[RMDB]
RNA sequence: GGGAACGACUCGAGUAGAGUCGAAAAGGUUGUUAGUAACCAGCCGUUGCGUCUCACUUGUUUGUGGCCUAUUCCAUCCAGUACUGGUGCUCUGGCCACUAUAUAUUUUAAUGGUACUAACGGUGCACAGUGCAAUGGGUUUGACAGUAAUGCACCCGAAUCGUACUCGGUUCGCCGAGUACGAUUCAAAAGAAACAACAACAACAAC
Reactivity to 2A3 in 0.01 (KOAc 150mM, MgCl2 10mM, bicine 150mM(pH8.5), 24C), signal-to-noise 1, nucleotides 027 to 156: g040g000u030u000g010u080u110a040g100u080a060a050c010c000a010g060c040c000g010u030u030g000c000g070u000c000u100c030a040c030u060u150g020u140u020u090g000u060g030g010c000c000u060a040u230u180c020c000a050u060c010c000a060g070u120a060c180u010g080g000u020g040c010u040c020u130g080g010c010c010a000c000u000a000u000a030u000a030u030u200u070u050a070a020u050g010g040u010a020c010u040a030a060c110g050g000u010g010c020a070c030a120g010u040g100c030a070a110u040g000g030g130u020u120u030g080a010c000a070g030u200a020a210u000g000c000a080c000c000c000